[RMDB]
RNA sequence: GGGAACGACUCGAGUAGAGUCGAAAAGAUAUGGAGAUCACCAGCCUUGGAUUUAUACACGAAAGCUAUAUGGUCGGAAACGACCAUAUAGCUGAGUGUAUUGUCAGGCUGUGUGAUCUCCUAAGUCCUUACACUCAAAGUUCGCUUUGAGUGUAAGAAAAGAAACAACAACAACAAC
Reactivity to DMS in 0.01 (KOAc 150mM, MgCl2 10mM, bicine 150mM(pH8.5), 24C), signal-to-noise 3, nucleotides 027 to 126: g000a100u010a300u010g000g020a030g010a010u000c000a010c010c000a010g010c000c000u000u020g030g010a020u010u010u000a000u000a010c000a010c000g000a190a140a020g020c000u000a000u000a000u000g000g000u000c000g000g000a130a130a300c000g020a010c000c000a000u000a000u000a000g000c010u000g000a240g000u000g010u000a000u010u000g000u000c010a020g010g010c000u000g000u010g020u000g000a000u000c000u000c000c000u000a010a100g010u000c040
Reactivity to 2A3 in 0.01 (KOAc 150mM, MgCl2 10mM, bicine 150mM(pH8.5), 24C), signal-to-noise 2, nucleotides 027 to 126: g060a030u160a090u260g000g000a000g020a020u000c000a000c010c010a000g000c010c040u120u300g190g030a060u210u300u250a010u050a000c010a000c030g230a300a050a010g000c000u000a010u000a020u020g000g000u020c030g040g000a140a100a090c010g000a010c000c000a000u020a000u000a000g000c000u000g000a000g000u000g000u000a000u000u000g000u000c020a000g010g010c000u000g010u000g000u010g010a000u000c010u010c000c000u000a000a000g000u040c000